[RMDB]
RNA sequence: GGGAACGACUCGAGUAGAGUCGAAAAGAAACUCCUUAGAGCUCUAGCUACCGCGGCCCCAUCGUGAGAUUAGGGUGCAGCACCAGGUUAAUGGCCUCGGGUAUGGUAAAAACGCUAGAGAUUGGACAAUCCGCAGCCAAGCCUCUUCGCAAGAAGUGAGAAUAAUGAGGUUCGCCUCAUUAUUCUCAAAAGAAACAACAACAACAAC
Reactivity to 2A3 in 0.01 (KOAc 150mM, MgCl2 10mM, bicine 150mM(pH8.5), 24C), signal-to-noise 1, nucleotides 027 to 156: g040a050a080a060c030u050c030c040u080u090a100g030a020g150c000u020c000u000a000g010c000u020a020c010c010g000c000g020g000c000c000c010c010a010u000c020g030u060g060a130g010a050u030u220a160g000g010g000u050g000c040a020g000c000a010c000c000a010g050g000u020u040a100a030u180g020g000c000c010u010c140g020g020g000u140a300u110g010g000u000a030a000a000a000a000c010g000c000u000a000g000a000g000a000u000u100g020g050a030c030a080a040u020c030c100g020c030a040g000c020c000a000a050g000c000c030u040c050u030u040c040g020c070a050a100g050a080a020g120u030